[RMDB]
RNA sequence: GGGAACGACUCGAGUAGAGUCGAAAAGGUGGAGACACGCUGUACACCGGGAAUGCAUCGAACUCGCGUUUAAGCGGUCUGUAAGGCCGUCGGCGUCCUGGGGAAGGGUCACGGAAGUGACCCUUCUGAAAUCAUAAUGCUUCGGCAUUAUGAUUUCAAAAGAAACAACAACAACAAC
Reactivity to DMS in 0.01 (KOAc 150mM, MgCl2 10mM, bicine 150mM(pH8.5), 24C), signal-to-noise 3, nucleotides 027 to 126: g000g020u000g010g010a180g030a140c040a060c050g010c070u000g020u000a110c120a120c020c000g010g000g010a060a060u000g020c050a170u010c060g000a040a050c040u000c220g000c240g000u000u000u000a070a140g000c000g000g010u000c000u010g000u000a050a050g010g000c000c000g000u000c040g000g010c020g010u000c020c000u000g000g000g010g000a020a010g000g010g010u010c000a000c010g020g030a160a130g020u000g000a020c000c000c000u000u000c010u000
Reactivity to 2A3 in 0.01 (KOAc 150mM, MgCl2 10mM, bicine 150mM(pH8.5), 24C), signal-to-noise 2, nucleotides 027 to 126: g070g000u030g010g020a060g010a030c030a000c070g070c050u070g020u070a050c070a040c000c020g020g010g020a130a060u090g030c040a060u050c060g010a010a040c030u020c070g040c050g010u040u010u030a030a010g000c010g030g000u000c020u030g290u120a040a080g010g010c010c010g000u020c030g000g030c010g010u040c010c010u040g020g010g000g000a000a000g020g000g010u000c010a010c000g090g090a120a050g000u000g000a000c020c030c000u010u010c000u000
The record gives the reactivity of an RNA of 177 nucleotides to DMS and 2A3. 2A3 is a SHAPE reagent: it acylates the 2'-hydroxyl of flexible nucleotides of all four kinds. For 2A3 the reverse transcriptase was SuperScript II with manganese.